[RMDB]
An RNA of 207 nucleotides, treated with 2A3 and read out base by base. Source: RMDB library RSTRND, as collected in RNAgym. Reactivities are given for positions 27 through 156.
RNA sequence: GGGAACGACUCGAGUAGAGUCGAAAAAGUGUCACCCUAACACCUGAUCGCGACGGAAACCCUGGCCGGGGUUGAAGCGUUAAAACUAAGCGGCCUCGCCUUUAUCUACCGUGUUUGUCCGGGAUUUAAAGGUUAAUUAAAUGACAAUACUAAACAUUACACUAAGUGUCUUCGGACACUUAGUGUAAAAAGAAACAACAACAACAAC
Reactivity to 2A3 in 0.01 (KOAc 150mM, MgCl2 10mM, bicine 150mM(pH8.5), 24C), signal-to-noise 1, nucleotides 027 to 156: a010g080u090g040u080c030a090c000c040c030u070a100a060c010a030c090c030u110g060a080u100c060g010c010g090a080c030g000g060a110a000a010c010c000c010u020g030g010c020c020g010g000g000g000u000u020g010a060a010g030c010g010u010u070a040a120a060a100c060u110a110a000g070c010g040g000c000c000u030c040g020c000c000u000u000u000a000u000c000u020a040c000c000g000u000g000u000u040u000g000u000c000c010g000g020g000a000u000u000u000a000a000a000g010g010u000u010a040a000u060u010a010a010a010u060g010a000c010a010a010u160a170c040u130a110a170a020c040a110u040